About this RNA
Structure probing data (2A3 and DMS) for a 177-nucleotide construct. It was measured as part of the RMDB library OK1LIB. Conditions: 150 mM KOAc, 10 mM MgCl2 and 150 mM bicine (pH 8.5), 24 C. DMS adducts were read by reverse transcription with MarathonRT.

[RMDB]
RNA sequence: GGGAACGACUCGAGUAGAGUCGAAAAACUAUUUGGAUUUAUCGCGGCACGAAUCUAUUUUGUGAUUUUCCAAUGGCCAUAUUACGCGGAAAAUCCAAGUGAAAUUAUUAAAAUAUGGCAUGGUGGAGGGUUAUAGAAUAUUCGUAUUCUAUAACCCAAAAGAAACAACAACAACAAC
Reactivity to 2A3 in 0.01 (KOAc 150mM, MgCl2 10mM, bicine 150mM(pH8.5), 24C), signal-to-noise 8, nucleotides 027 to 126: a000c120u140a140u100u040u040g010g000a020u000u010u020a130u070c020g010c010g030g030c060a020c110g090a040a040u060c080u130a200u160u180u070u070g090u060g070a100u020u030u100u080c020c040a080a080u130g100g000c000c000a000u010a010u010u060a050c030g000c010g020g010a020a020a000a000u000c000c010a040a030g040u070g130a030a040a050u210u190a080u100u200a150a070a020a030u020a010u000g000g000c030a020u050g070g030u060g030g130a060
Reactivity to DMS in 0.01 (KOAc 150mM, MgCl2 10mM, bicine 150mM(pH8.5), 24C), signal-to-noise 3, nucleotides 027 to 126: a090c040u010a080u000u000u010g010g000a010u000u000u000a010u010c010g000c020g000g020c090a040c060g000a040a010u030c160u010a080u040u000u000u010g000u000g010a090u010u010u010u010c080c060a090a070u020g000g020c000c000a010u000a010u010u000a070c030g010c020g000g000a050a010a000a010u000c000c000a000a030g010u010g020a070a040a040u020u060a090u030u030a040a070a030a030u010a010u000g000g000c020a060u030g010g020u010g010g020a300